[RMDB]
RNA sequence: GGGAACGACUCGAGUAGAGUCGAAAAGCCCUUCAGAGUUGUUCCAAGUUGGGUGACGGGGCUGGGCCUUUAUACCUUGGCAUGAACCAAUCACUGGACGUGGGUUGCUUGGGAAGGGGAAUGACUUUGGGUAAGGAGGCUCUCUUCAGCCAAAGGAACUGUAAAGGAAUUUCGAUUCCUUUACAGUAAAAGAAACAACAACAACAAC
Reactivity to 2A3 in 0.01 (KOAc 150mM, MgCl2 10mM, bicine 150mM(pH8.5), 24C), signal-to-noise 2, nucleotides 027 to 156: g030c000c000c000u020u110c070a070g020a000g010u010u010g010u020u100c010c000a040a080g160u050u030g040g010g040u050g010a040c050g010g000g050g050c070u020g010g030g050c020c000u070u110u050a130u060a070c010c000u020u010g010g010c010a060u060g060a050a060c010c000a050a120u130c030a010c130u100g080g030a040c050g060u140g010g110g050u090u230g110c060u070u100g000g010g030a050a030g020g000g020g040a010a050u080g090a110c030u080u120u080g020g030g000u040a040a080g080g010a020g020g000c040u010c000u000c000u080u100c000a030g030c020c010a000a080a030g070g000a060
Reactivity to DMS in 0.01 (KOAc 150mM, MgCl2 10mM, bicine 150mM(pH8.5), 24C), signal-to-noise 2, nucleotides 027 to 156: g010c000c010c010u000u010c040a250g030a050g000u000u000g000u000u080c000c020a070a300g090u000u000g020g010g020u000g000a030c060g000g020g030g010c020u000g000g000g040c050c010u000u010u000a170u000a150c020c030u000u010g010g000c000a110u000g030a180a150c020c020a090a100u000c050a090c070u020g000g000a070c130g000u000g000g020g000u000u000g010c050u010u000g060g020g020a090a130g000g000g030g010a190a100u010g000a090c010u000u000u000g030g000g010u000a050a190g010g000a100g020g010c080u000c030u000c020u000u010c020a090g010c000c020a010a050a060g000g000a070